[RMDB]
Conditions: 150 mM KOAc, 10 mM MgCl2 and 150 mM bicine (pH 8.5), 24 C. This 177-nucleotide RNA was probed chemically with DMS and 2A3. For DMS, 1,791 sequencing reads were counted. For 2A3 the reverse transcriptase was SuperScript II with manganese. It was measured as part of the RMDB library RFM100.
RNA sequence: GGGAACGACUCGAGUAGAGUCGAAAAUAAAUAGUUAUCAAGUAUUAAAAGUUAAAAUAGUAGAACUUUUAUAGAUAACGAUUUGGAUUUUGUAGACGAGGAGGAUAGUGAUCGAAUCAGAUCGGCGACGUUAGAGAGUGUUCGCACUCUCUAACGUAAAAGAAACAACAACAACAAC
Reactivity to DMS in 0.01 (KOAc 150mM, MgCl2 10mM, bicine 150mM(pH8.5), 24C), signal-to-noise 2, nucleotides 027 to 126: u010a010a010a070u000a080g010u000u000a000u000c000a220a120g000u020a120u040u000a000a010a000a030g000u000u000a040a010a140a100u050a160g010u010a210g000a030a020c000u010u000u000u000a000u000a070g000a010u000a020a050c000g010a030u000u020u050g030g000a100u000u030u000u010g000u010a050g000a090c030g000a040g000g010a110g010g030a060u020a060g000u000g000a020u000c040g000a080a060u020c090a080g000a080u010c020g010g020c070g010
Reactivity to 2A3 in 0.01 (KOAc 150mM, MgCl2 10mM, bicine 150mM(pH8.5), 24C), signal-to-noise 1, nucleotides 027 to 126: u090a000a040a020u080a010g000u000u000a010u000c000a060a160g070u070a110u140u020a060a000a000a000g010u000u040a030a050a300a300u170a130g050u060a090g150a060a010c000u050u000u000u000a010u000a020g010a010u010a000a000c000g030a000u010u010u050g060g000a060u050u080u000u150g080u160a080g060a150c070g010a060g010g040a050g020g010a020u010a010g130u040g020a000u020c000g010a000a060u210c010a050g020a050u020c020g030g030c050g030